The data come from the RNA Mapping Database (RMDB), library ARCHII. Structure probing data (DMS and 2A3) for a 207-nucleotide construct. For DMS the reverse transcriptase was MarathonRT. Reactivities are given for positions 27 through 156. Reactivities are rounded to 0.1 and cut off at 0 and 3. For 2A3, 2,081 sequencing reads were counted. The reactions ran in a buffer of 150 mM KOAc, 10 mM MgCl2 and 150 mM bicine (pH 8.5), at 24 C.

RNA sequence: GGGAACGACUCGAGUAGAGUCGAAAAUCGCGACGUCCGGGUCGAAAACUUAGCGAAUCGCCGUAGUGCAGCGUGUUCGUCCGCGUCGCUGCGGUUAAAUCAAAUGACUGAACUAAACAUGUAGAACUAGUCGUGGAGCGCUUCUGGACGCGGGUUCGCGUGUGGUGUAGUUCGCUACACCACACGCAAAAGAAACAACAACAACAAC
Reactivity to DMS in 0.01 (KOAc 150mM, MgCl2 10mM, bicine 150mM(pH8.5), 24C), signal-to-noise 1, nucleotides 027 to 156: u010c040g060c010g050a040c000g010u010c070c020g000g030g000u020c070g030a040a070a090a060c040u010u000a120g070c010g000a130a050u010c010g010c000c000g020u000a080g000u000g010c060a060g060c020g060u000g020u000u000c080g030u000c110c030g030c030g050u000c050g010c020u000g020c000g000g030u010u000a070a100a120u010c040a070a050a060u000g000a140c010u000g000a070a140c060u010a080a050a010c040a120u000g000u020a110g000a080a090c130u000a060g010u010c080g040u000g000g040a180g040c070g000c060u000u020c050u010g030g010a060c070g010c030g070g000g010u000u000c030
Reactivity to 2A3 in 0.01 (KOAc 150mM, MgCl2 10mM, bicine 150mM(pH8.5), 24C), signal-to-noise 4, nucleotides 027 to 156: u100c010g010c020g060a140c010g040u000c010c010g000g020g050u080c040g080a060a020a070a060c120u110u080a040g020c000g030a040a030u050c020g000c040c000g040u050a010g020u020g020c060a040g000c020g000u040g030u030u050c030g040u030c010c000g000c000g050u060c000g000c010u000g000c000g000g000u060u090a030a100a040u170c080a040a060a060u090g020a000c020u050g010a050a040c000u090a120a150a070c090a160u180g110u230a060g050a160a070c050u040a080g050u030c030g040u070g050g030a060g010c020g010c040u080u070c020u090g030g000a010c000g000c000g020g000g020u040u070c030